The record gives the reactivity of an RNA of 177 nucleotides to DMS.

RNA sequence: GGGAACGACUCGAGUAGAGUCGAAAAUGGUCCAAACCCCUCGGCAACCAAACAGCGGAAGACGACGACGACGAAACCGUCGACGCUCUAAUCGAGGAAGCAGAAAUAGAGGAGGGUCUGGCGAAACCUAGGCCCAACUGUUCGCAGUUGGGCCUAGAAAAGAAACAACAACAACAAC
Reactivity to DMS in 0.01 (KOAc 150mM, MgCl2 10mM, bicine 150mM(pH8.5), 24C), signal-to-noise 1, nucleotides 027 to 126: u060g010g000u000c030c030a010a000a000c060c000c000c000u000c000g000g000c020a060a300c000c040a000a080a160c300a010g000c100g000g000a190a130g000a030c090g090a200c000g000a010c000g030a100c100g060a200a180a010c130c070g000u000c060g030a180c010g150c110u030c000u000a130a160u030c100g000a300g140g000a030a300g030c000a040g000a070a040a000u130a060g000a000g000g070a100g000g000g000u090c070u000g000g000c030g000a110a060a230c030
Annotation:
The RNA was probed in 150 mM KOAc, 10 mM MgCl2 and 150 mM bicine (pH 8.5) at 24 C.